[RMDB]
Record summary:
This 177-nucleotide RNA was probed chemically with DMS and 2A3. Conditions: 150 mM KOAc, 10 mM MgCl2 and 150 mM bicine (pH 8.5), 24 C. As a SHAPE reagent, 2A3 marks flexible, mostly unpaired nucleotides at the ribose 2'-OH. Values cover nucleotides 27 to 126.

RNA sequence: GGGAACGACUCGAGUAGAGUCGAAAAUUUAAGUCAACAACGAGUGUUCAAGGAAAAGGUGGACACAAAGGCUCCAGAGCCUCCAGAAGGAGUCAAAUACGUCCUCAAUGAGACCAAGAAAUGAAAGCGUAAUAGCUCCAUUCGUGGAGCUAUUACGAAAAGAAACAACAACAACAAC
Reactivity to DMS in 0.01 (KOAc 150mM, MgCl2 10mM, bicine 150mM(pH8.5), 24C), signal-to-noise 2, nucleotides 027 to 126: u020u000u020a030a120g020u000c060a090a160c040a030a050c140g030a060g000u010g000u030u000c050a110a140g000g010a090a100a130a100g030g040u010g000g010a010c010a040c100a020a160a070g000g000c000u050c000c010a100g000a210g000c000c030u000c030c030a050g010a140a190g000g020a020g010u000c000a040a050a010u030a110c120g000u000c000c050u000c090a120a090u000g000a170g020a060c030c070a060a130g000a100a030a060u020g020a120a160a080g000
Reactivity to 2A3 in 0.01 (KOAc 150mM, MgCl2 10mM, bicine 150mM(pH8.5), 24C), signal-to-noise 3, nucleotides 027 to 126: u100u070u040a140a090g120u120c020a060a020c010a050a020c070g070a110g020u100g060u030u020c040a050a030g180g030a140a080a000a050g180g030u010g040g000a000c000a000c000a050a070a020g000g020c000u000c010c010a010g010a050g080c010c030u050c010c000a030g050a170a080g080g000a020g000u000c000a000a000a100u190a050c070g000u010c000c000u040c060a020a060u140g000a010g000a030c000c000a040a040g090a120a130a040u130g090a120a080a010g020